[RMDB]
RNA sequence: GGGAACGACUCGAGUAGAGUCGAAAAACAACACGCUUCGGCGUGUUGUCGACGGAGGAUGCUGAGGACGCGCUUGUGCCGCAGCAGGGAAGCGCAGCGUAAAUCAGAGGUGAUUCGUCACCUCUAAUGAACUCAUUAUUUUCGAAUAAUGAGUUCAAAAAGAAACAACAACAACAAC
Reactivity to DMS in 0.01 (KOAc 150mM, MgCl2 10mM, bicine 150mM(pH8.5), 24C), signal-to-noise 9, nucleotides 027 to 126: a030c000a010a010c000a010c000g010c000u000u010c190g040g010c000g020u000g000u000u000g010u000c050g010a100c080g010g010a070g010g010a110u010g010c030u000g000a060g010g000a170c160g010c080g000c070u000u010g020u000g010c030c030g010c060a060g010c050a060g000g000g010a130a060g000c060g020c030a040g010c060g020u000a040a110a100u010c130a020g010a020g010g010u000g000a060u000u010c160g010u000c000a060c010c000u000c020u000a020a090
Reactivity to 2A3 in 0.01 (KOAc 150mM, MgCl2 10mM, bicine 150mM(pH8.5), 24C), signal-to-noise 8, nucleotides 027 to 126: a010c000a000a000c010a000c010g020c000u030u080c210g130g000c000g010u000g000u000u010g000u010c020g020a030c030g030g040a030g070g010a040u080g020c030u030g040a040g040g030a030c050g050c000g010c080u110u140g050u100g040c020c030g020c020a050g020c030a020g030g020g020a050a020g020c020g000c030a020g010c020g050u110a040a070a080u100c050a030g000a010g000g030u040g010a030u030u050c140g020u000c040a000c000c000u010c000u000a010a050